Description:
An RNA of 177 nucleotides, treated with DMS and 2A3 and read out base by base. The reactions ran in a buffer of 150 mM KOAc, 10 mM MgCl2 and 150 mM bicine (pH 8.5), at 24 C. It was measured as part of the RMDB library 15KREP. As a SHAPE reagent, 2A3 marks flexible, mostly unpaired nucleotides at the ribose 2'-OH.
RNA sequence: GGGAACGACUCGAGUAGAGUCGAAAAGGAAUCUCUUCUGCUUGUGACGGUCUUGCUUCAGCUUAUAGGGCGAAUUCCUUUGAUGUACCUACAUUCUGCGCAAACCGUUCUGCAAUGUGUAAUUGGUCCAUUAUUCAGGGUUCGCCCUGAAUAAUGGAAAAGAAACAACAACAACAAC
Reactivity to DMS in 0.01 (KOAc 150mM, MgCl2 10mM, bicine 150mM(pH8.5), 24C), signal-to-noise 2, nucleotides 027 to 126: g010g010a110a050u000c040u010c010u010u010c090u010g000c040u010u000g010u000g010a040c050g000g020u000c150u000u010g000c020u000u010c040a050g020c070u000u000a060u000a040g020g000g000c030g000a090a050u000u000c030c070u010u000u000g020a080u000g000u020a070c000c000u010a010c070a020u000u000c040u000g040c300g000c020a050a040a020c040c020g000u000u000c020u000g020c020a020a040u010g010u010g010u020a050a070u000u000g020g000u000
Reactivity to 2A3 in 0.01 (KOAc 150mM, MgCl2 10mM, bicine 150mM(pH8.5), 24C), signal-to-noise 2, nucleotides 027 to 126: g060g010a130a120u040c030u030c000u230u010c050u070g010c010u070u080g050u100g050a010c000g020g000u000c060u100u010g000c000u100u140c010a010g000c000u050u050a020u030a080g000g000g040c020g080a090a110u160u130c030c000u050u020u140g080a080u120g020u140a220c000c000u010a000c000a020u020u050c000u010g030c010g020c010a000a010a030c000c000g030u010u000c000u030g000c000a000a110u110g010u010g030u080a050a120u030u120g060g030u010